An RNA of 177 nucleotides, treated with DMS and read out base by base. Conditions: 150 mM KOAc, 10 mM MgCl2 and 150 mM bicine (pH 8.5), 24 C.

[RMDB]
RNA sequence: GGGAACGACUCGAGUAGAGUCGAAAAGAUAUGGAGUGGUUGGGACAUGGCACCUUUCGGAAACGAAAGGAUGCCAACAGCCCAACCACUCCUAAGUCAAAGCGACCUGUGUUCGCACAGGUCGCAAUCAUUCAAAGAAGUUCGCUUCUUUGAAUGAAAAAGAAACAACAACAACAAC
Reactivity to DMS in 0.01 (KOAc 150mM, MgCl2 10mM, bicine 150mM(pH8.5), 24C), signal-to-noise 4, nucleotides 027 to 126: g000a010u000a050u010g000g010a010g040u000g000g000u000u000g000g010g010a030c110a090u020g010g010c000a040c010c000u000u010u010c000g020g000a010a010a030c000g010a010a010a010g010g010a050u000g020c000c000a030a040c180a200g000c000c000c000a010a010c000c000a000c000u000c000c000u000a000a040g000u000c000a140a160a150g010c000g010a020c000c000u000g040u000g000u010u020c300g020c000a010c000a000g000g000u000c000g020c000a010a010